[RMDB]
RNA sequence: GGGAACGACUCGAGUAGAGUCGAAAAGGCAGAACACGGGCAGCGAAGGCGCUGCCCCUGCCGGAGUUCCUGGACCUGAAGCGGGGGCCCAACUACAAAAUCAGCUCGGCAUCCUCAACGGCUUACUCAGGUAAUGAAUGUUCGCAUUCAUUACCUGAAAAGAAACAACAACAACAAC
Reactivity to DMS in 0.01 (KOAc 150mM, MgCl2 10mM, bicine 150mM(pH8.5), 24C), signal-to-noise 2, nucleotides 027 to 126: g000g000c000a000g000a140a050c200a200c300g030g000g000c010a000g020c000g010a300a170g000g000c080g020c020u000g010c010c060c000c000u000g030c000c010g000g000a290g030u000u000c010c000u010g000g000a070c010c050u000g000a110a040g010c060g000g010g000g000g030c000c050c030a000a060c010u070a020c160a060a040a100a090u020c130a100g020c090u000c070g000g010c030a040u000c010c000u020c030a030a120c190g060g000c000u030u000a130c160u010
Reactivity to 2A3 in 0.01 (KOAc 150mM, MgCl2 10mM, bicine 150mM(pH8.5), 24C), signal-to-noise 5, nucleotides 027 to 126: g010g000c010a000g000a130a030c140a050c260g000g020g010c020a000g020c010g070a180a150g300g040c070g000c010u000g000c000c000c000c000u000g000c000c010g000g010a040g010u010u000c000c010u000g040g060a050c000c020u050g060a080a010g050c030g000g020g000g040g000c000c010c000a030a030c010u140a060c030a040a110a020a060u110c020a010g020c010u020c000g020g000c000a050u040c000c010u030c020a060a040c040g090g030c010u030u040a030c030u000